Description
Chemical mapping of a 177-nucleotide RNA with 2A3 and DMS. In probing experiments dimethyl sulfate is read out at A N1 and C N3, which are open when not base-paired. 2A3 is a SHAPE reagent: it acylates the 2'-hydroxyl of flexible nucleotides of all four kinds.
[RMDB]
RNA sequence: GGGAACGACUCGAGUAGAGUCGAAAAGAUAUGGAGUCUACAUAUCAACCGAGUGUCGGAAACGACAUGGCGGUUUCAACGUGUGAGACUCCUAAGUCAAAACUUCGGACUCUUCGGAGUCCGAAGACCAUGUAAAUGUGUUCGCACAUUUACAUGGAAAAGAAACAACAACAACAAC
Reactivity to 2A3 in 0.01 (KOAc 150mM, MgCl2 10mM, bicine 150mM(pH8.5), 24C), signal-to-noise 9, nucleotides 027 to 126: g010a010u030a020u100g000g000a000g000u010c000u040a030c030a010u130a030u270c180a110a010c010c000g010a030g000u000g010u010c010g020g020a070a030a040c010g040a030c020a010u050g300g270c040g000g030u040u080u240c180a120a060c080g000u020g010u080g230a090g000a010c000u000c000c000u010a030a010g020u000c020a020a020a150a240c000u010u000c000g000g010a000c010u020c020u090u120c300g170g010a000g000u000c000c010g000a000a000g000a010
Reactivity to DMS in 0.01 (KOAc 150mM, MgCl2 10mM, bicine 150mM(pH8.5), 24C), signal-to-noise 8, nucleotides 027 to 126: g000a040u000a300u010g000g010a030g010u000c010u000a030c000a010u000a100u010c260a040a020c000c000g010a300g010u000g000u000c000g010g000a050a070a140c010g020a010c000a010u000g000g020c020g010g010u000u000u010c270a100a130c190g010u000g000u000g000a030g000a020c000u000c000c000u000a000a040g000u000c020a100a100a130a180c010u000u000c000g010g000a020c000u000c000u000u020c270g020g000a020g010u000c000c000g000a010a000g000a130